[RMDB]
RNA sequence: GGGAACGACUCGAGUAGAGUCGAAAAGAUAUGGAUGUAGCUAAUACGGGAGCUACUUAAUCGGAAACGAUUAACUAGCGAAGAACGGAUAACUACAUCCUAAGUCAAACCCGAGUUCGCUCGGGAACGUUAUAAGUCGGUUCGCCGACUUAUAACGAAAAGAAACAACAACAACAAC
Reactivity to 2A3 in 0.01 (KOAc 150mM, MgCl2 10mM, bicine 150mM(pH8.5), 24C), signal-to-noise 4, nucleotides 027 to 126: g040a020u050a030u150g000g010a000u000g000u000a010g010c060u110a100a030u220a300c020g000g050g030a050g000c000u000a010c020u010u000a000a000u000c020g020g000a050a030a000c000g000a000u000u010a000a010c000u000a000g010c030g230a300a030g040a170a040c030g030g000a030u030a110a090c000u000a010c000a010u000c000c000u010a050a030g010u000c030a070a030a200c020c010c010g000a000g010u150u210c280g000c110u000c000g000g010g030a010a000
Reactivity to DMS in 0.01 (KOAc 150mM, MgCl2 10mM, bicine 150mM(pH8.5), 24C), signal-to-noise 3, nucleotides 027 to 126: g000a030u010a300u000g000g000a030u000g010u000a000g010c010u000a170a090u010a110c000g000g000g010a210g000c000u000a000c090u000u000a000a010u000c000g000g000a110a120a110c010g030a000u010u000a000a000c100u010a010g010c000g000a100a130g000a140a100c010g000g010a070u000a080a080c000u000a000c000a000u000c010c000u010a020a080g000u000c040a040a090a140c000c000c000g000a020g020u000u010c200g020c000u000c000g000g010g010a010a020

An RNA of 177 nucleotides, treated with 2A3 and DMS and read out base by base. For 2A3, 7,549 sequencing reads were counted. The RNA was probed in 150 mM KOAc, 10 mM MgCl2 and 150 mM bicine (pH 8.5) at 24 C. The DMS profile rests on 3,001 reads.